Background:
Structure probing data (2A3) for a 177-nucleotide construct. Source: RMDB library OK1LIB, as collected in RNAgym.
[RMDB]
RNA sequence: GGGAACGACUCGAGUAGAGUCGAAAAGCUCGGAGACGAGCAAGGCUGACAAAACAUUGUCCCAACCUCCACGUGGUGUCGGCUGGAUAAUGCUGCAUUAUGUUGCAUUUAUCAACUGGGAAGGAAAACCAUCCAUGGCCUUCGGGCCAUGGAUGGUAAAAGAAACAACAACAACAAC
Reactivity to 2A3 in 0.01 (KOAc 150mM, MgCl2 10mM, bicine 150mM(pH8.5), 24C), signal-to-noise 2, nucleotides 027 to 126: g000c010u000c000g050g000a210g120a090c000g000a000g000c020a010a010g030g000c070u000g000a010c000a000a090a010a000c020a060u030u100g000u010c000c000c000a060a170c000c030u120c090c080a060c010g040u090g000g040u000g010u060c000g020g000c030u020g040g000a000u010a000a030u020g000c000u000g000c000a040u030u120a090u300g010u010u000g000c010a040u000u130u130a050u020c010a030a040c020u080g000g000g000a070a040g090g060a070a070a000